[RMDB]
RNA sequence: GGGAACGACUCGAGUAGAGUCGAAAAGCAUAGCCUUCGGGCUAUGCAAAGGCCGCCGAGGAUACCCGAAGCCGCAGCGAUGCGGCUGGUCGAGAAAUUCUCCAAAAGGAUGUCCUUCGGGACAUCCCCAUUUAGACGUGUUCGCACGUCUAAAUGGAAAAGAAACAACAACAACAAC
Reactivity to 2A3 in 0.01 (KOAc 150mM, MgCl2 10mM, bicine 150mM(pH8.5), 24C), signal-to-noise 1, nucleotides 027 to 126: g010c010a020u000a000g020c000c010u040u060c270g070g010g000c000u000a010u000g010c010a030a010a000g000g010c010c040g000c030c020g040a000g030g010a040u070a130c020c010c000g040a040a010g000c000c000g020c000a010g000c010g050a030u040g000c050g000g010c000u000g020g020u030c040g030a000g060a100a100a030u090u010c020u030c030c040a110a060a000a010g020g000a000u010g000u020c020c000u050u070c270g060g000g000a000c000a000u000c000c000
Reactivity to DMS in 0.01 (KOAc 150mM, MgCl2 10mM, bicine 150mM(pH8.5), 24C), signal-to-noise 2, nucleotides 027 to 126: g010c000a040u010a010g010c000c000u010u000c200g020g030g010c000u000a020u020g010c000a000a060a160g030g010c030c020g020c090c050g000a020g000g010a080u000a120c030c030c050g020a190a030g000c020c000g030c030a020g000c300g000a210u010g010c000g030g010c000u000g020g000u010c030g020a040g000a070a040a120u000u000c020u000c000c180a050a100a090a120g000g000a000u000g000u010c000c000u020u030c190g050g000g000a010c000a000u010c000c000